[RMDB]
RNA sequence: GGGAACGACUCGAGUAGAGUCGAAAAUGGACUUUUUACAGUUCCUACUUAUCCGAUUUUAACGCUGUUUUAUUGGCGCAAAGGUUUACGGAUAAACAACUAAUAAUUAAACCUUUUGUGUGCGAAAAUUGGACGUUUAGGUUCGCCUAAACGUCAAUCGUUUAAAAGCGUUCGCGCUUUUAAACGAAAAAGAAACAACAACAACAAC
Reactivity to DMS in 0.01 (KOAc 150mM, MgCl2 10mM, bicine 150mM(pH8.5), 24C), signal-to-noise 1, nucleotides 027 to 156: u000g000g010a070c040u000u000u000u020u020a080c050a160g020u000u000c000c030u000a150c060u000u010a010u020c000c010g000a300u010u010u010u020a190a040c030g030c000u010g030u010u010u010u000a110u010u010g000g050c010g020c000a030a040a050g020g000u000u000u000a190c060g000g000a000u000a050a050a150c020a040a090c070u000a070a100u010a130a100u000u000a030a000a030c010c000u000u020u010u010g020u000g000u000g030c010g020a080a030a100a210u000u010g020g000a010c000g020u000u000u010a010g010g000u000u010c300g020c000c000u000a000a010a000c000g010u000c010a010a010
Reactivity to 2A3 in 0.01 (KOAc 150mM, MgCl2 10mM, bicine 150mM(pH8.5), 24C), signal-to-noise 2, nucleotides 027 to 156: u090g000g030a010c030u090u100u130u190u230a090c220a040g040u130u090c000c020u020a060c070u060u050a000u000c000c000g030a040u000u000u030u050a070a010c030g000c020u010g160u180u170u020u100a130u160u180g020g020c010g010c020a020a010a000g000g020u010u000u010a010c000g000g020a040u070a040a170a000c040a070a000c070u180a080a150u110a140a030u160u070a000a020a010c010c000u010u060u130u140g110u020g020u030g110c040g040a090a040a070a110u110u070g070g020a000c000g000u000u000u000a000g000g010u000u030c090g060c010c000u000a000a000a000c020g000u000c000a000a000
Chemical mapping of a 207-nucleotide RNA with DMS and 2A3. For DMS, 1,957 sequencing reads were counted.